[RMDB]
RNA sequence: GGGAACGACUCGAGUAGAGUCGAAAAGUAUCGUGGCCGGCCCUAUGCAGACCGACAUAACGACCAUGGCAAAUCAGAUCCGCGUCGAGUAUCGGGUGGUCACUGACACCAUGGAGCAAACCGGAGAGGCUCUAAUAAAUUUCGAUUUAUUAGAGCCAAAAGAAACAACAACAACAAC
Reactivity to DMS in 0.01 (KOAc 150mM, MgCl2 10mM, bicine 150mM(pH8.5), 24C), signal-to-noise 7, nucleotides 027 to 126: g020u010a060u010c040g020u000g000g000c010c010g030g040c020c010c020u000a070u010g010c100a130g010a130c130c020g010a060c070a080u010a100a120c100g000a080c020c020a070u000g000g000c090a060a110a140u000c060a050g000a100u010c020c020g020c120g010u010c010g010a150g010u010a050u000c080g000g000g030u000g010g000u000c070a050c030u010g020a030c100a060c010c030a060u010g000g010a150g010c090a040a090a120c050c030g020g020a120g010a210
Reactivity to 2A3 in 0.01 (KOAc 150mM, MgCl2 10mM, bicine 150mM(pH8.5), 24C), signal-to-noise 4, nucleotides 027 to 126: g030u030a020u200c030g020u030g020g000c000c030g070g050c000c010c000u020a050u050g010c020a010g060a070c020c030g030a040c030a070u220a100a050c060g010a020c030c010a060u070g050g020c070a060a030a130u110c020a020g040a100u020c000c030g000c040g070u070c020g040a050g040u090a060u140c020g000g000g000u010g000g000u030c040a020c080u000g000a000c010a010c030c010a030u060g040g010a060g040c080a110a110a100c030c020g040g030a110g020a030